An RNA of 177 nucleotides, treated with DMS and 2A3 and read out base by base. The RNA was probed in 150 mM KOAc, 10 mM MgCl2 and 150 mM bicine (pH 8.5) at 24 C. For DMS the reverse transcriptase was MarathonRT. Values cover nucleotides 27 to 126. For 2A3 the reverse transcriptase was SuperScript II with manganese.

[RMDB]
RNA sequence: GGGAACGACUCGAGUAGAGUCGAAAAGAAUAACAGAUGAAGGUGACUAUGAGGUAAAACUCCGCAGCCUGAUUCGCUUUCUCGAAUGCGGAGUGGAAGUUAUUAAAAUGCCAAGAGGAAAACUCAACCCUCCGGUAUGAUUCGUCAUACCGGAGGGAAAAGAAACAACAACAACAAC
Reactivity to DMS in 0.01 (KOAc 150mM, MgCl2 10mM, bicine 150mM(pH8.5), 24C), signal-to-noise 1, nucleotides 027 to 126: g000a060a040u000a090a090c070a150g050a150u010g030a120a000g000g020u000g030a060c070u070a060u100g000a070g020g000u000a000a050a200a010c000u000c040c050g000c000a010g000c060c050u010g070a070u000u030c070g000c150u000u000u020c000u040c060g020a060a040u000g000c010g000g000a000g000u000g040g020a060a100g000u000u010a010u010u050a000a180a100a080u040g050c050c080a060a190g000a140g000g010a100a100a020a050c020u000c070a140a140
Reactivity to 2A3 in 0.01 (KOAc 150mM, MgCl2 10mM, bicine 150mM(pH8.5), 24C), signal-to-noise 1, nucleotides 027 to 126: g030a000a120u140a020a080c020a020g060a000u110g120a100a030g000g000u030g040a080c150u300a140u210g000a100g020g030u080a040a040a040a040c000u000c030c000g000c000a000g020c000c000u020g000a010u030u000c000g000c060u060u080u000c220u010c030g030a140a070u000g090c000g000g000a000g000u000g090g000a190a000g150u120u000a120u020u020a090a180a300a050u270g000c000c000a080a000g030a030g250g080a000a300a000a000c000u000c000a010a000